[RMDB]
RNA sequence: GGGAACGACUCGAGUAGAGUCGAAAAAGCGACAUCUAGCGUACGAUCCAUGUGUCUGACUCAUGUCUAGGCUCCAUGAGAUCGUAGGAUCGUACUGACAUGACUAGCUCAGGUACCUAGGUACGUGCGGCUCUAGUGAGUUCGCUCACUAGAGCCGAAAAGAAACAACAACAACAAC
Reactivity to DMS in 0.01 (KOAc 150mM, MgCl2 10mM, bicine 150mM(pH8.5), 24C), signal-to-noise 1, nucleotides 027 to 126: a060g040c000g010a070c300a110u000c010u000a100g010c060g000u000a000c000g000a000u000c000c000a130u010g000u010g000u000c170u020g040a000c000u010c020a000u000g020u020c010u000a030g000g020c000u000c030c000a020u000g040a040g030a050u000c040g010u000a110g010g010a010u000c020g020u000a000c010u000g030a080c050a090u000g000a010c020u000a250g000c050u000c120a110g000g000u040a030c020c010u000a060g000g010u000a010c060g030u000g000
Reactivity to 2A3 in 0.01 (KOAc 150mM, MgCl2 10mM, bicine 150mM(pH8.5), 24C), signal-to-noise 1, nucleotides 027 to 126: a020g010c030g020a020c010a000u010c040u100a030g020c000g070u020a020c010g010a000u030c000c020a070u130g110u040g040u150c120u110g000a000c000u040c030a060u110g060u000c090u080a010g020g000c010u000c010c000a010u000g030a040g050a230u030c000g010u000a040g000g030a010u040c000g000u000a040c020u060g050a040c010a080u080g000a020c040u000a020g030c000u020c030a040g090g020u020a040c000c000u070a110g140g010u020a030c040g050u050g090